RNA sequence: GGGAACGACUCGAGUAGAGUCGAAAAGGGUCCGUGUUUUUCUCUCUGUUUGGGAAAAGGUGGGUUGGACAGAGGAAGGAUGGCCCAGGGUUAUAAGCUUGGCUCCAGUACAGCCGGGAGACCCCCAGGCAGCAUGAGUCGGUGGGACUGGACCUGAGCCAUUUUAUAGUUUCGACUAUAAAAUGGCAAAAGAAACAACAACAACAAC
Reactivity to 2A3 in 0.01 (KOAc 150mM, MgCl2 10mM, bicine 150mM(pH8.5), 24C), signal-to-noise 1, nucleotides 027 to 156: g000g030g000u020c020c020g040u020g080u060u090u000u030u060c090u000c010u000c020u050g050u030u070u080g200g000g000a190a150a020a000g050g030u070g020g000g010u070u100g020g000a000c030a040g060a040g040g030a030a070g050g020a030u060g000g000c010c000c010a020g070g040g010u130u110a110u020a290a080g160c050u060u040g020g020c020u020c020c030a010g020u080a070c020a040g000c020c000g030g040g000a050g080a020c010c010c000c000c010a010g020g020c000a000g010c040a080u140g010a020g040u070c090g030g000u080g000g040g000a010c020u040g010g000a000c000c000u030g010a000